Annotation
The record gives the reactivity of an RNA of 177 nucleotides to 2A3.
[RMDB]
RNA sequence: GGGAACGACUCGAGUAGAGUCGAAAACCAAGAGUGGCGUUAAUGACAUUUGUAUGUUUGAGAAUAAAACCACUUUGCCUACUAAUAUAGCUUUUGAACUCUAUGCUAAGCGUGCUGUACGCUCGCAGCAUACCACUGGCUUCGGCCAGUGGUAUGCAAAAGAAACAACAACAACAAC
Reactivity to 2A3 in 0.01 (KOAc 150mM, MgCl2 10mM, bicine 150mM(pH8.5), 24C), signal-to-noise 1, nucleotides 027 to 126: c030c000a000a000g020a000g000u000g010g080c070g010u110u080a110a110u080g010a000c020a030u040u140u200g170u140a120u000g000u010u060u080g150a210g030a160a080u140a110a130a030a000c000c010a000c000u000u040u030g050c000c000u140a100c050u020a010a090u020a000u030a070g030c020u000u030u100u050g080a060a010c030u000c060u100a090u090g030c000u040a070a070g000c010g040u030g000c040u100g090u090a010c060g010c000u000c010g000c030a000
Values cover nucleotides 27 to 126. Conditions: 150 mM KOAc, 10 mM MgCl2 and 150 mM bicine (pH 8.5), 24 C. The data come from the RNA Mapping Database (RMDB), library 15KREP.